[RMDB]
RNA sequence: GGGAACGACUCGAGUAGAGUCGAAAAGGGUGAGACCUAGCAACCGUAGGGGUAUUCUCAAAGGAAGCUUUUGCAGUGACGCCCAUGUAAGUGGGAUAUAACAACAGAACUCGUAUGAGUAGCCUAAUAAAUCGGACCUUCUUCGGAAGGUCCGAAAGUGUUAUGCUCAGUUCGCUGAGCAUAACACAAAAGAAACAACAACAACAAC
Reactivity to 2A3 in 0.01 (KOAc 150mM, MgCl2 10mM, bicine 150mM(pH8.5), 24C), signal-to-noise 2, nucleotides 027 to 156: g000g000g020u090g010a120g010a020c000c000u030a040g020c050a030a080c060c030g070u090a040g020g040g000g030u030a100u120u090c030u000c050a030a040a020g000g000a130a000g030c000u010u020u050u080g010c030a020g030u020g030a010c080g020c000c000c000a000u020g170u170a140a140g000u010g000g040g000a010u060a040u030a150a090c010a040a000c030a010g080a110a020c020u020c040g060u230a040u220g010a030g010u040a020g040c000c000u080a150a050u120a090a190a070u040c000g000g000a000c000c000u000u010c010u040u050c030g080g000a000a030g000g010u020c000c000g000a000a000a000
The record gives the reactivity of an RNA of 207 nucleotides to 2A3.
The 2A3 profile rests on 805 reads.
The data come from the RNA Mapping Database (RMDB), library M2RFPK.
Reactivities are given for positions 27 through 156.
The reactions ran in a buffer of 150 mM KOAc, 10 mM MgCl2 and 150 mM bicine (pH 8.5), at 24 C.
2A3 is a SHAPE reagent: it acylates the 2'-hydroxyl of flexible nucleotides of all four kinds.